[RMDB]
RNA sequence: GGGAACGACUCGAGUAGAGUCGAAAACGCCGGCUGCGGUGACGCCGGCGGCGCGAAGCGGCCGACAUCCGGCAGCGCAGGGCAUGCUUCGAUUUUCGCCUCCUGCAACGCCGCGUCGAAGCAGACAUAACGUAAAACUAUUCGUAGUUUUACGUUAAAAAGAAACAACAACAACAAC
Reactivity to 2A3 in 0.01 (KOAc 150mM, MgCl2 10mM, bicine 150mM(pH8.5), 24C), signal-to-noise 9, nucleotides 027 to 126: c040g030c020c000g020g020c060u180g010c020g030g060u050g030a010c030g020c030c040g010g000c000g000g000c030g000c000g020a050a020g020c020g010g010c020c020g050a070c030a150u120c070c000g060g020c040a050g050c040g010c060a050g060g030g000c060a070u170g010c010u040u050c040g130a190u150u060u060u170c030g000c000c010u020c000c000u000g000c000a030a030c020g010c010c000g000c000g000u000c000g020a060a020g010c010a010g030a040c030a070
Reactivity to DMS in 0.01 (KOAc 150mM, MgCl2 10mM, bicine 150mM(pH8.5), 24C), signal-to-noise 9, nucleotides 027 to 126: c120g010c060c020g010g010c010u010g040c010g010g010u010g010a050c300g010c030c050g010g010c050g000g010c050g010c040g010a070a060g020c010g010g000c030c010g000a120c180a100u010c130c020g000g010c040a070g010c170g010c070a080g000g000g010c070a070u010g010c010u000u000c040g000a150u000u000u010u020c060g010c050c050u010c010c010u000g010c030a070a300c050g010c010c020g010c070g010u000c010g010a110a120g010c040a090g000a120c180a140